The data come from the RNA Mapping Database (RMDB), library OK1LIB. Structure probing data (DMS) for a 177-nucleotide construct. For DMS the reverse transcriptase was MarathonRT.

RNA sequence: GGGAACGACUCGAGUAGAGUCGAAAACAAAUAAGUUCUUCUCGGUUCUUACUGGUGGAUACGGCUGUCAAAGUAUGAGUGUGUGACGGGGGUAUUUAUAAAUAGGAGCUCCUUGCGAGGUGUCACGCCAUGCUGCUUCAUUCGUGAAGCAGCAUGGAAAAGAAACAACAACAACAAC
Reactivity to DMS in 0.01 (KOAc 150mM, MgCl2 10mM, bicine 150mM(pH8.5), 24C), signal-to-noise 1, nucleotides 027 to 126: c040a090a040a020u110a040a130g010u020u030c010u000u000c000u040c020g000g000u000u000c050u000u020a060c000u000g010g010u000g000g030a080u010a040c010g020g080c000u000g000u020c050a100a090a120g010u000a010u000g020a120g000u010g030u090g010u000g000a080c050g040g000g000g000g010u030a080u010u000u000a100u070a030a080a110u010a130g010g010a040g020c020u000c040c060u000u000g000c050g070a130g000g010u020g030u010c020a060c030g020